RNA sequence: GGGAACGACUCGAGUAGAGUCGAAAACACCACAGAAAGCGGGUUGCUGUCAUGUCCAAGCGAACAACCCCCACCUAUCCGGUCGAAGUGAUCCGGUCGGAUCGACGUACUCGGACUGUGUCGGCACAUUGCUAUUCCCGUUCGCGGGAAUAGCAAUAAAAGAAACAACAACAACAAC
Reactivity to DMS in 0.01 (KOAc 150mM, MgCl2 10mM, bicine 150mM(pH8.5), 24C), signal-to-noise 2, nucleotides 027 to 126: c170a150c040c070a120c230a080g010a080a100a050g020c090g040g010g010u000u000g000c020u000g000u030c050a050u010g000u010c050c020a070a040g010c030g000a110a010c090a070a300c030c000c000c010c030a080c180c030u000a050u010c010c010g000g030u010c010g000a110a080g000u010g010a050u010c000c000g010g000u010c050g020g000a070u010c100g010a140c040g010u010a060c030u000c060g030g000a020c050u010g020u000g000u000c010g020g010c050a050c150
Reactivity to 2A3 in 0.01 (KOAc 150mM, MgCl2 10mM, bicine 150mM(pH8.5), 24C), signal-to-noise 1, nucleotides 027 to 126: c000a030c000c020a060c030a060g160a080a120a020g060c020g090g030g000u130u060g040c000u010g030u070c010a050u050g000u000c010c030a010a080g040c000g090a120a020c020a080a090c090c000c000c000c010a070c000c000u030a050u030c000c010g000g030u010c040g030a070a040g100u070g130a060u000c030c010g040g000u000c000g000g000a020u020c000g020a040c020g000u020a040c040u010c030g080g020a030c010u100g000u000g050u010c040g030g070c020a010c010